[RMDB]
This 177-nucleotide RNA was probed chemically with DMS. DMS adducts were read by reverse transcription with MarathonRT. The RNA was probed in 150 mM KOAc, 10 mM MgCl2 and 150 mM bicine (pH 8.5) at 24 C. The DMS profile rests on 1,286 reads.
RNA sequence: GGGAACGACUCGAGUAGAGUCGAAAAGCACAUGCCUGUAAUCCCAGCUACUUGGGAGGCUGAGGUAGGAGAAUCGCUUGAACCCGGGAGGCGGAGGUUGCGGUGAGCUGAGAUAGCGCCGUUGCACCCUUUCACGCAGAUUCGUCUGCGUGAAAGGAAAAGAAACAACAACAACAAC
Reactivity to DMS in 0.01 (KOAc 150mM, MgCl2 10mM, bicine 150mM(pH8.5), 24C), signal-to-noise 1, nucleotides 027 to 126: g010c040a210c050a070u000g010c000c010u010g000u000a200a170u000c000c000c010a040g010c140u000a040c110u000u000g000g010g030a040g000g000c080u000g000a040g000g000u000a040g030g010a110g000a100a090u000c170g000c020u000u000g000a100a120c050c020c030g010g000g020a060g020g020c110g020g020a080g000g000u000u000g010c040g010g010u010g000a130g010c040u030g020a090g010a100u010a060g030c010g060c020c040g010u010u010g030c070a120c180